[RMDB]
RNA sequence: GGGAACGACUCGAGUAGAGUCGAAAACUGCCACCGGGACGCAGUGAUCCUCGCAGGGUCGCACGGUCGCCUCGGGUCGGCCUCGUGUCGGCUCGACCUGCGAGGGGAGCGAGUGGCGAGCCCGACCAAAACUUUCUCGCCUUCGGGCGAGAAAGAACAUUUUUCUUAUCUUCGGAUAAGAAAAAUGAAAAGAAACAACAACAACAAC
Reactivity to 2A3 in 0.01 (KOAc 150mM, MgCl2 10mM, bicine 150mM(pH8.5), 24C), signal-to-noise 2, nucleotides 027 to 156: c030u050g060c000c000a000c020c000g240g190g180a140c050g040c020a190g210u000g030a010u000c000c000u000c000g000c010a000g020g010g010u170c080g020c060a120c120g050g010u050c010g010c010c000u020c010g010g000g000u010c010g000g010c000c020u100c120g240u300g010u020c010g010g000c010u000c020g020a040c000c000u000g000c000g000a000g000g000g000g010a000g000c000g020a000g000u010g010g000c000g000a000g060c030c040c000g050a040c000c000a020a030a020a080c000u000u000u040c000u000c000g000c000c030u050u040c150g050g000g000c000g010a000g000a000a000a010g000a000a010
Conditions: 150 mM KOAc, 10 mM MgCl2 and 150 mM bicine (pH 8.5), 24 C. Chemical mapping of a 207-nucleotide RNA with 2A3. Values cover nucleotides 27 to 156. The data come from the RNA Mapping Database (RMDB), library M2RFPK.